[RMDB]
RNA sequence: GGGAACGACUCGAGUAGAGUCGAAAAUUUAGGUGAAUGCUGUCCUAGAUGAAGAAGAAAAAUGGAAAGUCAGUCAGCAGCGCUAGUAUCUAUCAAGGUAAAAUUAACUCACUCCACCUUGAGUUGGGAGAUUAUGCAGUUGGUUCAUACCAAGACCCAGCUAAGUCAGGUUCGCCUGACUUAGCUGAAAAGAAACAACAACAACAAC
Reactivity to 2A3 in 0.01 (KOAc 150mM, MgCl2 10mM, bicine 150mM(pH8.5), 24C), signal-to-noise 3, nucleotides 027 to 156: u060u060u040a040g000g060u030g040a180a030u040g010c040u010g010u060c030c070u070a070g020a040u080g020a040a160g030a070a030g060a100a080a020a060a060u170g020g020a070a040a010g050u060c060a010g020u020c010a010g000c010a010g000c030g040c010u020a020g070u120a120u100c070u010a070u050c070a000a040g020g020u090a030a040a160a050u170u060a080a020c010u040c050a060c010u040c040c010a020c010c010u060u050g070a100g050u040u030g080g100g000a020g020a010u070u120a040u250g050c030a010g020u030u000g000g010u020u050c080a030u080a100c020c010a010a030g000a040c040c030
An RNA of 207 nucleotides, treated with 2A3 and read out base by base. For 2A3, 1,234 sequencing reads were counted.